RNA sequence: GGGAACGACUCGAGUAGAGUCGAAAAGCAGCACUGCCUGCGCCCGGGAACGAGCCCCCAGCAGUCUGGACUGGCACAUGCAGGGUCGACUGGGGCAGUGCUGUUGCCUCUGUGAACUGCUGGGCACGAGUAACCUGUACUUCGGUACAGGUUACUCAAAAGAAACAACAACAACAAC
Reactivity to DMS in 0.01 (KOAc 150mM, MgCl2 10mM, bicine 150mM(pH8.5), 24C), signal-to-noise 2, nucleotides 027 to 126: g000c000a010g020c000a070c040u000g000c020c020u000g030c070g030c020c000c010g000g000g020a150a120c100g030a120g000c030c050c000c020c010a070g020c010a050g010u000c050u000g000g020a110c080u010g000g020c030a060c130a070u000g000c030a080g010g020g040u000c040g000a100c150u010g020g000g000g000c000a010g010u000g010c010u000g010u000u010g010c000c010u030c120u010g000u010g020a080a040c020u000g000c040u010g000g000g000c230a100c130
Reactivity to 2A3 in 0.01 (KOAc 150mM, MgCl2 10mM, bicine 150mM(pH8.5), 24C), signal-to-noise 1, nucleotides 027 to 126: g010c000a010g010c010a020c110u140g020c040c000u070g090c100g050c010c000c000g030g050g000a200a140c070g020a050g000c000c000c000c000c000a010g010c000a000g020u010c050u060g000g050a060c070u050g030g040c020a040c000a130u260g020c030a100g080g000g000u140c050g090a210c180u200g010g020g060g030c000a000g010u000g000c010u000g000u040u030g010c000c000u020c030u050g100u070g140a080a090c030u030g020c020u010g000g000g020c050a010c080